[RMDB]
RNA sequence: GGGAACGACUCGAGUAGAGUCGAAAAACAUUGUAGAGCCUAGAUCAGGGGGUGAGUUUGUAGAGCGGGCAACUGUUUUGCGAGCUUAUUUUUGGGUUUAGGUGUUCUGCUUUGAGGGGCUUGCUCCGGAGUAUAUGGUUUUCGAACCAUAUACUCCAAAAGAAACAACAACAACAAC
Reactivity to 2A3 in 0.01 (KOAc 150mM, MgCl2 10mM, bicine 150mM(pH8.5), 24C), signal-to-noise 6, nucleotides 027 to 126: a000c020a020u040u030g020u030a010g010a010g010c000c000u000a010g010a020u020c010a020g050g000g000g010g030u010g010a010g000u010u010u010g010u030a010g000a000g010c020g000g020g000c030a070a060c030u010g010u010u020u020u010g010c000g010a010g000c000u020u010a020u010u030u010u020u030g040g000g000u010u010u020a000g000g000u010g050u060u000c010u000g020c000u020u010u030g060a060g010g040g010g000c050u090u080g030c010u100c030c050
Reactivity to DMS in 0.01 (KOAc 150mM, MgCl2 10mM, bicine 150mM(pH8.5), 24C), signal-to-noise 3, nucleotides 027 to 126: a110c010a030u010u010g010u000a010g020a060g000c010c000u000a010g010a010u010c010a060g010g000g010g020g020u010g010a020g010u000u000u000g020u000a020g000a010g020c030g010g010g010c300a050a100c030u000g010u000u000u000u000g010c000g010a020g010c010u000u000a000u000u000u000u010u190g000g000g000u000u000u000a020g000g010u000g000u030u010c000u010g010c000u010u000u000g000a120g000g000g000g010c060u010u010g000c030u010c060c120

About this RNA: Structure probing data (2A3 and DMS) for a 177-nucleotide construct. For 2A3 the reverse transcriptase was SuperScript II with manganese. Conditions: 150 mM KOAc, 10 mM MgCl2 and 150 mM bicine (pH 8.5), 24 C. DMS adducts were read by reverse transcription with MarathonRT.